[RMDB]
RNA sequence: GGGAACGACUCGAGUAGAGUCGAAAAUUCCAAUUGACUACCUCAUUGGUCUUGGGUAUAGGUUUGUGUGCGUUCCUGACUUUGCUCUUCUAUUAUAUUAAUAAAGUAAAACGUGCUUUUGCAGAUUGAACUGUGCCGUUCGCGGCACAGAAAAGAAACAACAACAACAAC
Reactivity to DMS in 0.01 (KOAc 150mM, MgCl2 10mM, bicine 150mM(pH8.5), 24C), signal-to-noise 2, nucleotides 027 to 129: u050u020c010c040a110a090u070u050g010a100c050u000a060c000c050u010c030a180u050u000g070g000u000c010u020u000g020g000g000u000a010u070a100g000g010u000u000u050g010u040g000u010g000c080g000u030u030c010c010u020g000a000c030u010u060u000g020c000u040c040u040u030c070u000a060u040u070a090u020a000u000u000a000a000u000a140a080a090g010u000a070a070a060a120c140g000u070g010c000u000u000u090u020g000c030a070g010a090u010u010g030a040a090
Reactivity to 2A3 in 0.01 (KOAc 150mM, MgCl2 10mM, bicine 150mM(pH8.5), 24C), signal-to-noise 1, nucleotides 027 to 129: u040u000c000c000a010a010u020u020g100a020c010u000a020c060c030u110c050a080u130u090g000g000u000c000u020u060g070g000g020u010a000u000a010g000g070u000u000u090g010u000g000u010g040c070g000u000u000c020c000u000g000a000c000u110u060u080g000c010u010c000u130u080c000u000a110u050u070a100u000a000u110u070a120a090u080a020a020a020g070u130a060a060a000a000c000g000u010g000c000u000u170u020u060g000c000a020g000a200u000u000g080a120a010
The record gives the reactivity of an RNA of 170 nucleotides to DMS and 2A3. For DMS the reverse transcriptase was MarathonRT. The RNA was probed in 150 mM KOAc, 10 mM MgCl2 and 150 mM bicine (pH 8.5) at 24 C. For 2A3 the reverse transcriptase was SuperScript II with manganese. Source: RMDB library 15KLIB, as collected in RNAgym. Reactivities are given for positions 27 through 129.